Source information: Structure probing data (DMS and 2A3) for a 177-nucleotide construct. The DMS profile rests on 1,535 reads. It was measured as part of the RMDB library RFM100. The RNA was probed in 150 mM KOAc, 10 mM MgCl2 and 150 mM bicine (pH 8.5) at 24 C. The 2A3 profile rests on 410 reads.
RNA sequence: GGGAACGACUCGAGUAGAGUCGAAAAGGUGUUGGUGGUACUGAAAUUACCGCGUUUUCGAGGUUUUUCGUCGUGUCAACUUGCGAAGGGAAUUACGGGUUCUUGAUGAGCAUUGGUGAUAGGAGGUUCGGUGGUAUCUAUUCGUAGAUACCACCGAAAAAGAAACAACAACAACAAC
Reactivity to DMS in 0.01 (KOAc 150mM, MgCl2 10mM, bicine 150mM(pH8.5), 24C), signal-to-noise 1, nucleotides 027 to 126: g010g000u000g010u000u020g000g000u000g000g000u050a070c130u080g030a090a140a080u090u000a020c090c030g000c000g030u000u010u010u020c000g040a140g010g000u000u000u000u020u010c020g000u000c120g000u060g000u000c000a050a020c020u060u000g030c050g000a080a190g070g000g060a090a040u020u000a050c240g040g000g000u000u000c020u020u000g000a000u000g000a100g070c050a110u040u010g000g010u010g000a050u020a120g020g010a000g010g000u000
Reactivity to 2A3 in 0.01 (KOAc 150mM, MgCl2 10mM, bicine 150mM(pH8.5), 24C), signal-to-noise 1, nucleotides 027 to 126: g140g000u070g070u110u040g010g050u010g020g000u020a010c030u040g010a000a000a000u070u070a000c010c010g030c000g030u000u000u020u070c070g040a100g000g000u000u050u000u000u000c010g000u100c020g000u010g060u170c000a000a000c020u000u070g000c020g120a100a000g180g000g010a130a000u260u190a060c130g070g030g070u020u000c000u100u170g020a100u120g000a010g060c060a030u060u030g130g010u020g020a000u110a070g040g050a010g000g010u000